[RMDB]
RNA sequence: GGGAACGACUCGAGUAGAGUCGAAAAAGAGAUGAUGGAUCUUUUAAAACAAGCGACAACACAAGGUGUUACAGAAAUCAUUGUAACAUCACAUCACUUACAUCCUCGAUAUACCACACCUAUAGAAUAACGUGCCUCUGUUCGCAGAGGCACGUUAAAAAGAAACAACAACAACAAC
Reactivity to 2A3 in 0.01 (KOAc 150mM, MgCl2 10mM, bicine 150mM(pH8.5), 24C), signal-to-noise 2, nucleotides 027 to 126: a000g060a000g000a030u100g000a090u090g040g000a030u000c020u000u120u120u300a100a080a000a070c030a090a000g090c040g060a000c120a040a010c000a000c020a070a140g000g110u030g000u000u020a000c000a000g240a150a210a110u190c050a040u080u080g000u000a000a000c000a000u000c010a000c030a000u040c000a000c000u000u080a010c000a000u040c000c000u000c030g020a090u070a080u070a090c010c010a000c000a030c000c000u010a000u090a300g100a080a040
Structure probing data (2A3) for a 177-nucleotide construct. Source: RMDB library OK1LIB, as collected in RNAgym. 2A3 adducts were read by reverse transcription with SuperScript II with manganese. Values cover nucleotides 27 to 126. The RNA was probed in 150 mM KOAc, 10 mM MgCl2 and 150 mM bicine (pH 8.5) at 24 C. The 2A3 profile rests on 523 reads.